The data come from the RNA Mapping Database (RMDB), library OK2TST.
The record gives the reactivity of an RNA of 177 nucleotides to 2A3 and DMS.
2A3 is a SHAPE reagent: it acylates the 2'-hydroxyl of flexible nucleotides of all four kinds.

RNA sequence: GGGAACGACUCGAGUAGAGUCGAAAAAAGCGCCCGGCCUUGAUCUCGCGCCAGAGCGUGGCGUGGGAAAGGGUGGUGACCUCCAGCACCUGCUCCUCGCGCAGGUAUCCUUCAAGCGCGACCACGGCAGUUCUAUAGUGUUCGCACUAUAGAACUGAAAAGAAACAACAACAACAAC
Reactivity to 2A3 in 0.01 (KOAc 150mM, MgCl2 10mM, bicine 150mM(pH8.5), 24C), signal-to-noise 4, nucleotides 027 to 126: a000a000g100c060g020c010c010c000g080g030c020c000u110u080g050a160u090c010u010c020g020c000g000c010c010a080g030a070g230c140g150u030g000g020c000g000u020g000g020g000a040a020a030g040g010g000u020g010g030u050g040a140c010c010u010c030c020a040g030c020a010c010c000u010g000c000u040c020c020u050c020g030c000g000c020a000g030g020u030a080u070c010c010u050u090c060a070a020g010c010g000c010g040a020c010c030a050c020g090g020
Reactivity to DMS in 0.01 (KOAc 150mM, MgCl2 10mM, bicine 150mM(pH8.5), 24C), signal-to-noise 7, nucleotides 027 to 126: a090a090g000c100g040c030c020c120g030g010c010c010u010u010g010a150u000c010u000c010g010c010g010c010c010a070g010a260g040c210g010u000g010g010c010g030u000g000g000g010a020a120a090g020g000g020u010g000g010u000g010a120c070c030u000c030c030a090g010c100a050c020c010u000g000c060u000c050c080u000c070g010c090g010c020a060g010g000u000a050u000c040c030u010u010c120a100a140g010c030g010c030g000a070c080c050a080c130g000g010